[RMDB]
RNA sequence: GGGAACGACUCGAGUAGAGUCGAAAAAGCCAUACCAAUACGAUGGUAUGGCAAGUCCGUGACGGCGAUGGAUCCCGCCUGGCCGAUGCCGAACUGCCGAUCUGGCUGAUGGUUCCUGCCCCGUCAAAAAACGUAAAGCACUUCGGUGCUUUACGAACCGGGAAAAUACGUUCGCGUAUUUUCCCGGAAAAGAAACAACAACAACAAC
Reactivity to 2A3 in 0.01 (KOAc 150mM, MgCl2 10mM, bicine 150mM(pH8.5), 24C), signal-to-noise 1, nucleotides 027 to 156: a000g020c000c000a000u000a000c000c000a100a000u190a170c110g190a270u160g010g000u000a000u000g000g020c000a010a010g070u000c050c010g010u030g000a000c000g000g030c050g010a060u130g000g000a000u060c010c010c010g000c000c050u010g000g010c000c010g070a050u100g090c090c050g170a170a080c060u200g010c030c030g000a100u040c050u090g020g020c080u100g010a100u130g010g030u020u030c010c000u050g010c000c000c000c000g000u020c000a190a000a000a000a000a000c010g010u010a000a000a000g000c000a000c010u040u080c160g030g040u020g000c000u000u000u000a000c000g000a020a000
An RNA of 207 nucleotides, treated with 2A3 and read out base by base.
The 2A3 profile rests on 753 reads.